[RMDB]
RNA sequence: GGGAACGACUCGAGUAGAGUCGAAAAUGUGCGGCUCUACGCGAAUUUAUAUCCGUGUUUUGCGUAGGUCGCAGAGGCAUGCACUGCCAUGCCUGGCGGUGCAGCAGUAGGUAGCUGCGCGCACUGAAGUCUCUGGACCAUUCGUGGUUCAGGGGCUAAAAGAAACAACAACAACAAC
Reactivity to DMS in 0.01 (KOAc 150mM, MgCl2 10mM, bicine 150mM(pH8.5), 24C), signal-to-noise 9, nucleotides 027 to 126: u040g010u010g010c010g010g000c000u050c010u000a010c000g010c000g010a010a010u010u030u040a110u040a080u050c180c200g010u020g010u010u000u000u010g020c000g010u000a010g010g010u000c000g010c000a010g000a020g000g000c000a020u000g000c030a220c210u020g000c090c000a010u000g000c030c010u000g000g020c020g000g020u000g010c000a180g000c000a020g010u010a100g020g010u040a150g010c000u000g000c000g000c110g000c000a030c020u000g000a130
Reactivity to 2A3 in 0.01 (KOAc 150mM, MgCl2 10mM, bicine 150mM(pH8.5), 24C), signal-to-noise 9, nucleotides 027 to 126: u230g020u030g000c010g010g000c030u020c010u210a000c000g010c000g010a000a010u050u220u060a280u080a100u150c110c120g090u110g070u100u020u030u160g000c000g000u000a010g010g000u000c000g000c000a000g010a000g010g000c010a010u020g000c070a080c300u210g040c100c000a010u020g000c000c010u010g050g040c030g010g010u010g000c000a010g000c000a000g020u060a040g140g230u160a030g020c000u000g000c010g000c020g000c010a010c010u030g050a040